Structure probing data (2A3 and DMS) for a 177-nucleotide construct. High 2A3 reactivity points to a flexible backbone, as in loops and unpaired stretches. For DMS, 929 sequencing reads were counted. The RNA was probed in 150 mM KOAc, 10 mM MgCl2 and 150 mM bicine (pH 8.5) at 24 C. Reactivities are given for positions 27 through 126.
RNA sequence: GGGAACGACUCGAGUAGAGUCGAAAAGGUCCGCUGUUCGCAGCGGACCAAAUAAAAUCAGCGGUAUCGAGGCGUAAAAUAUUACCGGUGAACGCCUCGAUAAAACCGUGCCGUUCGCGGCACGGAAGCGCUAUAGAUAGUUCGCUAUCUAUAGCGCAAAAGAAACAACAACAACAAC
Reactivity to 2A3 in 0.01 (KOAc 150mM, MgCl2 10mM, bicine 150mM(pH8.5), 24C), signal-to-noise 1, nucleotides 027 to 126: g000g000u000c000c000g020c000u030g050u040u030c240g000c130a000g030c000g000g000a000c000c000a000a000a000u000a000a000a000a020u050c020a030g100c040g130g000u030a000u010c000g010a000g000g040c000g000u020a000a120a140a020u280a110u190u140a070c050c040g060g030u060g050a020a000c010g000c000c010u000c000g020a000u000a000a000a000a000c000c000g010u000g020c000c010g010u040u000c290g030c020g080g000c000a000c000g000g000a010a010
Reactivity to DMS in 0.01 (KOAc 150mM, MgCl2 10mM, bicine 150mM(pH8.5), 24C), signal-to-noise 1, nucleotides 027 to 126: g000g010u000c000c000g060c000u000g000u000u010c240g010c010a010g030c010g000g000a000c000c010a000a000a000u000a030a100a110a090u000c090a070g000c070g040g010u010a020u010c000g010a020g000g000c030g000u010a010a000a080a080u020a110u000u000a150c100c020g000g020u000g000a190a020c000g010c010c010u000c000g000a010u000a000a030a160a100c030c000g030u010g000c050c010g000u000u030c200g010c050g000g000c000a020c000g010g000a010a060